[RMDB]
RNA sequence: GGGAACGACUCGAGUAGAGUCGAAAAUUCGGCCAGAGCGGUCAGAAAAUGCUGAUCGUGGUUACGGCAGCCGCGGGCGCCGACAGCCCACCUGCCCGCGAGGUCGGGACUGACAUCGUCGAGGUGCGCUUGUGUCGCACUUCGGUGCGACACAAGCAAAAGAAACAACAACAACAAC
Reactivity to 2A3 in 0.01 (KOAc 150mM, MgCl2 10mM, bicine 150mM(pH8.5), 24C), signal-to-noise 1, nucleotides 027 to 126: u100u050c030g010g040c000c010a000g000a030g110c000g000g040u030c020a050g100a030a300a040a050u270g000c000u030g010a170u130c020g040u080g020g130u130u300a030c010g000g000c030a040g000c010c000g130c100g110g010g000c060g000c040c070g030a050c030a020g000c000c030c010a030c010c040u070g000c000c000c000g020c000g010a040g030g020u030c050g000g020g060a050c060u070g000a010c030a110u060c010g100u070c030g040a070g070g010u040g010c030
Reactivity to DMS in 0.01 (KOAc 150mM, MgCl2 10mM, bicine 150mM(pH8.5), 24C), signal-to-noise 1, nucleotides 027 to 126: u000u000c000g010g010c020c040a080g000a300g010c010g000g000u000c040a000g010a090a090a120a120u000g010c000u000g000a070u000c000g000u000g010g040u000u000a080c050g010g010c000a050g010c030c100g020c040g000g030g030c010g060c040c090g000a070c170a120g000c010c000c010a140c070c030u010g040c080c010c020g040c040g020a300g000g000u010c000g000g030g000a040c010u000g000a090c040a100u000c030g010u000c010g020a070g000g000u000g000c080